[RMDB]
RNA sequence: GGGAACGACUCGAGUAGAGUCGAAAACUGUAUCCCCUGCCCUCACCCCAGCGGGUUUUCAUCGCAGUGAUAUGACGCAUUCAAACCAUUUCUUAUCACCGGGUGUCAAUCAGCUAGGGUGUGGGCGCGGGUCCGCUGUAUAGAUUCGUCUAUACAACGUGUACUUUAAGUUCGCUUAAAGUACACGAAAAGAAACAACAACAACAAC
Reactivity to DMS in 0.01 (KOAc 150mM, MgCl2 10mM, bicine 150mM(pH8.5), 24C), signal-to-noise 2, nucleotides 027 to 156: c050u000g010u000a200u000c000c000c010c170u000g020c020c000c020u010c000a020c000c010c000c030a000g030c000g040g070g000u000u000u000u000c040a020u010c000g100c000a020g000u020g000a020u000a010u000g010a130c250g020c140a150u010u010c200a130a190a230c150c060a180u000u000u000c040u000u000a050u000c010a030c020c010g040g000g020u010g000u000c070a010a030u010c010a050g020c020u000a040g020g060g040u000g030u000g020g020g040c030g000c080g020g000g000u000c020c030g000c080u010g020u000a000u000a020g000a060u010u020c280g050u000c010u000a040u000a010c010a030a130
Reactivity to 2A3 in 0.01 (KOAc 150mM, MgCl2 10mM, bicine 150mM(pH8.5), 24C), signal-to-noise 6, nucleotides 027 to 156: c040u100g100u250a160u140c000c000c000c010u040g010c010c000c000u000c000a000c000c000c000c000a000g010c010g000g000g000u000u000u010u010c020a020u020c060g060c280a010g000u000g000a010u010a010u030g060a040c070g050c170a120u160u180c170a110a110a110c050c030a090u060u120u080c020u010u020a000u000c000a000c010c020g030g010g000u010g000u000c000a000a000u000c000a000g000c000u010a010g000g000g000u000g000u000g000g000g010c000g000c010g000g010g000u050c040c060g060c080u050g000u000a000u000a000g010a010u030u070c170g030u000c070u010a000u000a010c010a020a030
This 207-nucleotide RNA was probed chemically with DMS and 2A3. The DMS profile rests on 4,694 reads. The reactions ran in a buffer of 150 mM KOAc, 10 mM MgCl2 and 150 mM bicine (pH 8.5), at 24 C. High 2A3 reactivity points to a flexible backbone, as in loops and unpaired stretches.